[RMDB]
RNA sequence: GGGAACGACUCGAGUAGAGUCGAAAAUUAAAUUAACAGGCUAUUGAGGUGUCCAGUAUUACUGAUCCACUACAUCCCAGUACAUCUUCAUACCAGGAUGCUUAUGGCUUACAGGAUAUUAGCGAUAUCUUCCAGAAACUUUCGAGUUUCUGGAAGAAAAAGAAACAACAACAACAAC
Reactivity to DMS in 0.01 (KOAc 150mM, MgCl2 10mM, bicine 150mM(pH8.5), 24C), signal-to-noise 1, nucleotides 027 to 126: u000u030a100a090a220u010u020a080a120c070a080g000g000c040u020a040u000u010g000a070g020g020u000g020u030c070c020a090g000u000a080u020u020a040c120u010g020a040u000c050c020a080c020u000a060c070a100u000c000c010c000a090g000u000a010c100a060u010c120u000u020c080a100u000a050c070c050a060g010g000a000u000g000c120u000u000a060u000g000g000c080u000u000a070c060a060g000g000a020u020a040u000u000a120g010c080g010a030u020a120

Conditions: 150 mM KOAc, 10 mM MgCl2 and 150 mM bicine (pH 8.5), 24 C. Chemical mapping of a 177-nucleotide RNA with DMS. Source: RMDB library OK2TRN, as collected in RNAgym. Values cover nucleotides 27 to 126. For DMS the reverse transcriptase was MarathonRT.